[RMDB]
RNA sequence: GGGAACGACUCGAGUAGAGUCGAAAAAACAACAGGAGCAUCACACUCUUUUACUUUCUGGUUAAACCUUACGCCGAAAUAAUCCUUGCCGAAUUUAGGUUUGAUUACAUCCUCGCUAAUCCAUAUCAUGAACUCACGCGGUGACAUACCCAUCAGGCCAUCGAGCCUGAUUCGUCAGGCUCGAUGGAAAAGAAACAACAACAACAAC
Reactivity to 2A3 in 0.01 (KOAc 150mM, MgCl2 10mM, bicine 150mM(pH8.5), 24C), signal-to-noise 1, nucleotides 027 to 156: a000a000c040a020a000c030a040g030g010a020g040c000a040u110c010a000c020a020c010u050c000u040u100u060u110a060c030u020u060u090c040u190g020g010u090u050a100a080a020c000c010u010u030a020c060g030c010c030g050a050a030a060u170a000a060u080c020c030u050u070g030c010c030g110a050a090u060u010u120a040g060g000u050u050u060g010a000u020u000a060c060a040u000c020c020u000c010g000c060u020a030a060u040c020c000a030u030a030u150c110a170u060g080a030a040c050u100c020a050c090g050c000g050g020u040g020a010c000a040u120a080c000c040c080a030u120c040a060g120g000
Record summary
An RNA of 207 nucleotides, treated with 2A3 and read out base by base. Reactivities are given for positions 27 through 156. The RNA was probed in 150 mM KOAc, 10 mM MgCl2 and 150 mM bicine (pH 8.5) at 24 C.